RNA sequence: GGGAACGACUCGAGUAGAGUCGAAAAAGUUCUGAUGCACCGCGAAACGAAUUUGCAGGUGGAGAACGAGGAGACAAUCGAGGCACAAAGUGCCCGGACCCCAAAGCGCUGUUGGACGGAAUCCAACAAGAUGGUUUGAGUUCGCUCAAACCAUCUUAAAAGAAACAACAACAACAAC
Reactivity to DMS in 0.01 (KOAc 150mM, MgCl2 10mM, bicine 150mM(pH8.5), 24C), signal-to-noise 3, nucleotides 027 to 126: a130g000u000u020c000u010g000a170u040g000c000a020c020c000g010c000g020a010a040a180c270g030a110a140u020u010u000g000c000a090g080g000u000g010g000a030g000a000a000c020g000a150g000g020a070g010a060c130a080a100u040c050g000a160g000g000c010a020c000a060a130a080g010u000g020c010c020c000g010g020a120c050c000c000c050a050a140a130g010c090g030c060u010g020u000u000g000g000a090c090g000g010a080a170u000c000c000a010a020c070
Reactivity to 2A3 in 0.01 (KOAc 150mM, MgCl2 10mM, bicine 150mM(pH8.5), 24C), signal-to-noise 3, nucleotides 027 to 126: a010g020u010u000c000u000g040a070u210g080c020a000c000c000g000c020g050a010a050a000c090g060a080a200u000u000u070g000c060a080g000g010u010g010g090a090g040a040a000c030g000a070g030g090a070g000a050c060a020a020u170c040g050a220g000g030c020a010c080a140a220a010g050u010g000c000c000c060g040g020a050c000c000c040c060a020a150a060g060c070g020c080u070g000u000u000g000g020a020c050g070g110a000a080u000c000c000a000a000c000
The record gives the reactivity of an RNA of 177 nucleotides to DMS and 2A3.
The RNA was probed in 150 mM KOAc, 10 mM MgCl2 and 150 mM bicine (pH 8.5) at 24 C.